[RMDB]
RNA sequence: GGGAACGACUCGAGUAGAGUCGAAAACACUUGAGCCUGGGAGGUCAAGGCUAUAGUGAGCCAUGAUCGUACUGCUGCACUCCAGCCUGGGCCAUAGAGCAAGACGCUAUCUCAAAAAAAUUUACAAGACUUAUACUAUUUUCGAAUAGUAUAAGUCAAAAGAAACAACAACAACAAC
Reactivity to DMS in 0.01 (KOAc 150mM, MgCl2 10mM, bicine 150mM(pH8.5), 24C), signal-to-noise 4, nucleotides 027 to 126: c080a110c060u000u000g000a110g020c020c030u000g020g000g020a160g020g010u010c030a080a040g010g020c010u000a100u020a070g010u010g000a100g010c000c020a120u010g000a040u000c050g020u000a120c090u000g000c080u010g010c080a050c030u000c080c030a070g010c010c010u000g000g000g020c020c050a040u010a050g000a090g000c050a080a080g000a060c050g010c030u000a070u000c030u020c020a000a010a030a050a050a060a100u020u000u010a090c160a070a150
Reactivity to 2A3 in 0.01 (KOAc 150mM, MgCl2 10mM, bicine 150mM(pH8.5), 24C), signal-to-noise 5, nucleotides 027 to 126: c050a000c010u020u070g040a010g020c000c000u020g010g020g000a070g000g030u030c030a040a060g010g000c010u030a020u090a120g200u140g110a010g020c010c010a030u070g020a050u050c040g070u130a060c060u070g030c020u080g020c040a030c090u020c030c010a020g000c030c010u030g000g000g000c000c000a040u120a040g040a010g010c020a070a060g070a040c030g000c030u020a030u070c030u070c170a060a050a030a020a040a060a120u240u220u100a090c040a090a050